[RMDB]
RNA sequence: GGGAACGACUCGAGUAGAGUCGAAAAGGCCUCAUUGAAGAGCGUAGCUAGCUGCGUUUCAACCUGCGUGGGUUGGGGCGGCUUAGCGGAUUAGGCGUUGUUAUGCCCUAGUGGUCCUUACUCCAUGCUAAUCCGUGAGGUUCGCCUCACGGAUUAGAAAAGAAACAACAACAACAAC
Reactivity to 2A3 in 0.01 (KOAc 150mM, MgCl2 10mM, bicine 150mM(pH8.5), 24C), signal-to-noise 1, nucleotides 027 to 126: g040g040c010c040u080c040a040u010u190g200a270a110g040a000g130c000g000u170a010g040c050u020a040g000c000u030g030c050g010u000u000u180c000a010a010c000c000u250g070c220g180u300g010g000g020u000u020g040g000g010g030c010g040g000c040u060u140a020g000c000g000g000a000u050u050a030g000g030c020g010u040u020g120u210u170a080u210g010c000c000c000u030a070g040u000g160g010u070c000c040u000u060a040c020u020c030c000a090u180g010
Reactivity to DMS in 0.01 (KOAc 150mM, MgCl2 10mM, bicine 150mM(pH8.5), 24C), signal-to-noise 2, nucleotides 027 to 126: g010g000c030c020u000c020a100u000u000g000a110a100g000a050g000c040g010u000a140g000c030u010a060g000c000u010g000c020g000u000u010u010c020a010a010c040c010u010g030c300g010u020g000g010g020u000u000g020g000g020g020c000g020g000c010u000u020a030g000c020g000g010a090u010u000a050g010g020c060g000u000u000g010u000u010a050u010g000c060c010c010u010a070g020u010g020g010u000c040c020u000u010a120c150u010c020c020a110u040g000